[RMDB]
RNA sequence: GGGAACGACUCGAGUAGAGUCGAAAAGGCGGGCGAGUGAGGUCUGUGGCCGAAAGCGGCUUGUAGGCGCGCCGUGUGAAUGCUAUGUGCGGAUAGGGAGAUAGCGGCCAGCGUAGUAUCGUCAUAGGCGGCUUGCGUCCUUCGGGAUGUAAGCCGCAAAAGAAACAACAACAACAAC
Reactivity to DMS in 0.01 (KOAc 150mM, MgCl2 10mM, bicine 150mM(pH8.5), 24C), signal-to-noise 5, nucleotides 027 to 126: g010g010c050g000g000g000c050g010a090g000u010g000a080g010g000u030c030u020g000u020g000g000c000c020g010a070a080a120g020c030g010g000c030u000u030g040u010a070g020g000c030g000c060g010c020c000g010u010g010u030g000a080a080u030g010c050u010a060u010g020u010g010c030g000g000a080u030a060g000g000g010a100g000a090u020a080g000c010g000g000c020c020a060g010c070g000u010a080g010u020a050u010c060g010u030c050a130u020a080g000
Reactivity to 2A3 in 0.01 (KOAc 150mM, MgCl2 10mM, bicine 150mM(pH8.5), 24C), signal-to-noise 2, nucleotides 027 to 126: g020g000c020g000g000g000c020g030a070g040u080g030a000g000g030u000c010u020g080u020g030g000c000c010g040a070a010a010g100c010g010g000c000u000u100g020u110a020g010g000c000g000c000g000c020c030g000u040g000u000g000a090a000u060g000c020u040a020u040g030u030g000c020g000g030a030u030a020g000g010g000a050g010a020u040a020g010c000g010g010c000c000a000g000c010g000u010a010g000u010a070u030c030g030u020c010a020u020a020g040

The record gives the reactivity of an RNA of 177 nucleotides to DMS and 2A3. Source: RMDB library OK1LIB, as collected in RNAgym. DMS (dimethyl sulfate) methylates the pairing face of unpaired adenines and cytosines. 2A3 adducts were read by reverse transcription with SuperScript II with manganese. The RNA was probed in 150 mM KOAc, 10 mM MgCl2 and 150 mM bicine (pH 8.5) at 24 C. Values cover nucleotides 27 to 126. The DMS profile rests on 14,464 reads.